[RMDB]
The record gives the reactivity of an RNA of 177 nucleotides to DMS and 2A3. 2A3 adducts were read by reverse transcription with SuperScript II with manganese. The reactions ran in a buffer of 150 mM KOAc, 10 mM MgCl2 and 150 mM bicine (pH 8.5), at 24 C. The 2A3 profile rests on 15,522 reads. The DMS profile rests on 22,304 reads. Values are in units of 0.01, from 0 to 300, in steps of 10.

RNA sequence: GGGAACGACUCGAGUAGAGUCGAAAAAGGCAGCUUCCCGGCUUUUAAGCUACGGACGAUGCAAACGUAGCAGGCAUCGAAUUUUCGGCCCUUCGAAAAGCUGAGAUGUGCUCAGCAAGGGAAUCAACAAAAUAGCAUAAUUCGUUAUGCUAUUUUGAAAAGAAACAACAACAACAAC
Reactivity to DMS in 0.01 (KOAc 150mM, MgCl2 10mM, bicine 150mM(pH8.5), 24C), signal-to-noise 9, nucleotides 027 to 126: a060g010g000c050a040g000c090u000u000c010c010c000g010g000c030u010u000u010u000a060a130g010c010u000a010c030g000g000a100c080g010a070u010g020c100a060a100a180c030g000u000a020g010c020a120g000g000c030a050u000c030g020a070a130u010u000u000u000c030g010g000c070c020c040u000u010c090g010a110a050a080a110g010c010u000g000a030g000a240u010g010u010g010c010u000c020a010g010c020a060a050g010g000g010a050a080u010c140a090a150
Reactivity to 2A3 in 0.01 (KOAc 150mM, MgCl2 10mM, bicine 150mM(pH8.5), 24C), signal-to-noise 6, nucleotides 027 to 126: a000g050g000c010a020g010c030u030u000c000c010c000g000g020c000u140u100u040u180a090a030g000c000u010a010c020g030g050a040c070g100a100u150g070c080a110a050a040c030g020u020a010g010c010a010g040g000c000a050u070c070g070a130a120u110u040u060u050c020g030g000c010c010c000u030u050c020g050a070a090a030a030g000c010u050g010a010g010a070u230g070u120g190c000u010c010a010g000c010a020a020g030g000g030a030a060u120c030a020a090